Record summary: The record gives the reactivity of an RNA of 207 nucleotides to 2A3. Conditions: 150 mM KOAc, 10 mM MgCl2 and 150 mM bicine (pH 8.5), 24 C. Source: RMDB library OK3TST, as collected in RNAgym.
[RMDB]
RNA sequence: GGGAACGACUCGAGUAGAGUCGAAAAUUCUGUCUAUCAAAUGUUGACGAAUGAGUUAACACCAAUUCUACACAAUCUCUUCCAGAAAAUGGAAGAGGAGAACGCACUUCCUGAUCAAUUUUAUAAAGCUCGUAUUACCUAGAUACCAAACCUAAAGCUGUCAACUGUGAUUCGUCACAGUUGACAGAAAAGAAACAACAACAACAAC
Reactivity to 2A3 in 0.01 (KOAc 150mM, MgCl2 10mM, bicine 150mM(pH8.5), 24C), signal-to-noise 4, nucleotides 027 to 156: u030u000c000u070g050u000c030u030a130u120c100a130a100a130u170g010u050u010g020a020c020g030a100a130u160g040a090g100u040u040a080a020c040a030c060c040a030a020u120u000c060u150a080c070a010c000a110a110u050c010u000c000u010u000c000c000a040g060a190a220a120a120u030g000g000a000a000g000a000g000g010a030g010a000a010c050g000c010a030c010u040u030c000c010u030g030a050u080c100a130a120u070u030u130u120a160u060a070a090a010g020c000u030c070g010u040a080u030u040a020c000c030u030a010g000a040u080a100c020c050a050a050a030c080c000u190a070a180a040g060